[RMDB]
RNA sequence: GGGAACGACUCGAGUAGAGUCGAAAAGAUAUGGACCGUUUGUGGCUAGCUCCGACAUCGGAAACGAUGUGGGAGCUUGGACCCACACGGACGGUCCUAAGUCAAAACUCGUCCUUCGGGACGAGAACACAUCAAAUAGGUUCGCCUAUUUGAUGUGAAAAGAAACAACAACAACAAC
Reactivity to DMS in 0.01 (KOAc 150mM, MgCl2 10mM, bicine 150mM(pH8.5), 24C), signal-to-noise 9, nucleotides 027 to 126: g010a050u000a300u010g000g000a010c000c000g020u000u000u000g020u000g000g000c070u000a030g000c000u000c000c000g000a010c000a000u000c000g010g010a120a090a180c010g030a020u000g020u000g000g020g010a010g010c010u000u000g020g010a160c260c050c100a100c020a020c300g010g000a020c020g000g000u000c000c000u000a010a070g000u000c040a100a080a110a190c010u000c000g010u000c000c000u000u000c240g030g000g000a010c000g000a010g010a100a190
Reactivity to 2A3 in 0.01 (KOAc 150mM, MgCl2 10mM, bicine 150mM(pH8.5), 24C), signal-to-noise 6, nucleotides 027 to 126: g020a010u060a030u150g000g000a000c000c010g010u010u020u070g020u010g030g060c140u090a060g000c010u000c020c010g100a010c000a010u010c000g030g030a080a040a040c020g000a000u000g010u020g080g010g000a000g010c000u010u010g000g010a020c020c000c000a030c000a010c060g100g000a000c000g000g000u000c000c000u010a110a010g050u010c030a020a020a090a210c000u000c000g000u010c020c000u010u100c300g120g000g010a000c000g000a000g000a000a010